[RMDB]
RNA sequence: GGGAACGACUCGAGUAGAGUCGAAAAUAGUUUUCCAGGCCAGGCAAAAGAUUAAGACACAUUUUUAAUCUUCCAUGUGGGAUUAGGCCUGAAUUAGCUCUAUUUGUUAAGGGACUUGAUUUCAUUGUGGAUCCACUUGCUGAGUUAGGAAUAAAUACACUAUUAAUCCAUUCGUGGAUUAAUAGUGAAAAGAAACAACAACAACAAC
Reactivity to DMS in 0.01 (KOAc 150mM, MgCl2 10mM, bicine 150mM(pH8.5), 24C), signal-to-noise 3, nucleotides 027 to 156: u000a080g010u000u000u000u000c010c030a160g000g020c020c040a180g020g020c050a050a050a080a060g000a060u000u000a010a020g030a070c130a130c210a100u000u010u010u000u000a000a050u010c010u000u000c010c020a090u000g020u020g010g010g000a080u000u000a090g020g000c010c000u010g010a030a090u000u010a070g000c040u000c120u000a180u000u000u000g000u000u000a040a070g010g010g010a060c040u000u010g020a040u000u000u000c020a080u010u000g040u000g010g010a110u010c040c070a080c100u000u000g010c010u000g010a110g030u000u010a090g010g000a060a090u000a040a040a070u000a230
Reactivity to 2A3 in 0.01 (KOAc 150mM, MgCl2 10mM, bicine 150mM(pH8.5), 24C), signal-to-noise 4, nucleotides 027 to 156: u080a000g050u010u050u040u000c010c000a020g040g040c010c010a010g010g040c020a080a200a020a000g020a010u020u040a030a010g090a040c020a020c020a300u050u100u010u020u050a010a010u000c000u040u010c030c030a040u060g020u040g060g040g020a040u030u040a020g000g030c000c000u000g030a050a060u050u060a030g000c000u010c030u120a130u210u170u140g050u060u060a050a040g010g000g090a150c010u010u040g020a040u010u080u060c030a040u050u180g030u020g030g030a040u030c040c030a040c050u020u040g000c020u010g010a030g060u020u090a040g010g040a040a040u100a090a100a020u140a040